[RMDB]
RNA sequence: GGGAACGACUCGAGUAGAGUCGAAAACCUCCCUCGCUGGCGCCGGCUGGGCAACAUUCCGAGGGGACCGUCCCUCGGUAAUGGCGAAUGGGACCCAGAACUCUCUCUAGAUUCCCAGAGAGAAUCGCUAGAUCUUACUCUUCGGAGUAAGAUCUAGAAAAGAAACAACAACAACAAC
Reactivity to 2A3 in 0.01 (KOAc 150mM, MgCl2 10mM, bicine 150mM(pH8.5), 24C), signal-to-noise 1, nucleotides 027 to 126: c000c000u010c000c000c000u010c060g040c050u050g090g030c050g040c040c040g080g150c080u070g000g040g010c000a060a020c010a040u020u080c010c000g000a000g020g010g000g030a030c010c130g300u300c010c000c020u000c000g030g000u040a010a020u040g040g000c030g080a030a060u080g010g040g050a020c030c030c000a060g050a120a110c010u000c000u030c010u030c010u020a070g000a300u100u030c020c030c060a020g020a000g000a000g000a020a080u070c030g000
Reactivity to DMS in 0.01 (KOAc 150mM, MgCl2 10mM, bicine 150mM(pH8.5), 24C), signal-to-noise 2, nucleotides 027 to 126: c070c030u000c000c000c000u000c040g000c070u020g020g040c110g020c110c050g000g010c050u030g050g010g030c070a170a110c020a030u000u000c010c000g000a010g000g000g020g000a180c230c300g000u020c010c000c000u000c000g000g000u000a000a010u000g010g000c060g000a070a110u000g010g010g000a110c010c020c030a100g000a110a190c150u000c010u010c000u000c020u000a110g000a270u000u000c030c010c040a020g000a000g000a040g000a010a050u020c120g040